Chemical mapping of a 177-nucleotide RNA with DMS and 2A3.
The 2A3 profile rests on 983 reads.
For 2A3 the reverse transcriptase was SuperScript II with manganese.

RNA sequence: GGGAACGACUCGAGUAGAGUCGAAAAUACAUCCACCCGGUGACCGUCAUCAAUCGGUAAGCCGCCAGGAUGGCCAGGGCUUCUGGGGCAUCCGACUACCGCUCGGGCGAGCUGUCGCACCAGGAUGCAGCUUCAGUAGGUUCGCCUACUGAAGCUGAAAAGAAACAACAACAACAAC
Reactivity to DMS in 0.01 (KOAc 150mM, MgCl2 10mM, bicine 150mM(pH8.5), 24C), signal-to-noise 2, nucleotides 027 to 126: u030a140c090a080u010c000c010a130c060c090c020g000g000u000g000a070c030c000g000u010c120a110u030c170a160a200u000c000g000g040u030a090a100g010c040c010g050c060c100a200g020g000a040u010g020g020c060c020a050g000g010g030c190u000u000c010u000g020g000g030g020c000a020u000c000c030g000a060c060u000a080c100c080g010c030u020c120g000g020g020c230g000a040g030c000u000g000u000c050g000c040a040c100c060a230g000g000a070u000g020
Reactivity to 2A3 in 0.01 (KOAc 150mM, MgCl2 10mM, bicine 150mM(pH8.5), 24C), signal-to-noise 1, nucleotides 027 to 126: u150a000c010a000u000c010c020a020c020c000c000g040g000u010g030a020c010c020g050u040c030a170u040c010a070a180u060c030g000g000u020a030a070g030c010c020g110c070c040a040g040g020a030u040g010g010c040c020a100g050g040g050c000u180u090c010u170g020g020g090g030c000a010u020c030c000g000a010c010u120a130c000c020g040c050u040c080g090g050g050c080g010a020g000c080u040g050u080c040g000c040a040c040c000a050g000g020a030u090g010